[RMDB]
RNA sequence: GGGAACGACUCGAGUAGAGUCGAAAAGUGAUGAACGGGAUACGCAGGCUCACCACCUUGAGCGACGAACAGCUCAUGACCGAAGCGAAGCGUCUGGGCGCUCCGUUCGACGUGCUGCACGAGGUGGGGUUCGAUAUGGUUUCGACCAUAUCGAACCAAAAGAAACAACAACAACAAC
Reactivity to 2A3 in 0.01 (KOAc 150mM, MgCl2 10mM, bicine 150mM(pH8.5), 24C), signal-to-noise 2, nucleotides 027 to 126: g080u070g040a100u050g020a020a050c040g020g000g020a030u070a090c050g000c040a030g050g000c000u040c050a060c010c000a000c010c000u010u020g040a010g030c000g010a030c020g010a040a010c010a020g000c020u020c020a060u220g020a010c050c000g030a090a010g150c070g090a060a010g050c030g040u000c010u030g010g010g020c040g000c050u090c030c060g000u010u010c000g000a020c020g040u090g010c100u160g000c040a020c110g010a010g000g000u040g040g070
Reactivity to DMS in 0.01 (KOAc 150mM, MgCl2 10mM, bicine 150mM(pH8.5), 24C), signal-to-noise 2, nucleotides 027 to 126: g030u000g020a120u000g010a080a040c040g010g010g010a150u020a090c120g030c060a080g000g010c030u000c050a260c020c020a050c010c000u020u000g000a100g040c040g040a080c090g010a030a110c090a210g000c020u000c000a010u000g030a080c090c050g010a070a060g030c040g010a110a090g030c120g000u000c040u020g010g000g000c030g010c120u000c130c120g020u000u010c000g000a050c100g030u020g010c100u000g000c100a060c090g000a050g010g000u000g010g010
The data come from the RNA Mapping Database (RMDB), library OK2TST. This 177-nucleotide RNA was probed chemically with 2A3 and DMS. Reactivities are given for positions 27 through 126. Conditions: 150 mM KOAc, 10 mM MgCl2 and 150 mM bicine (pH 8.5), 24 C. The 2A3 profile rests on 2,759 reads.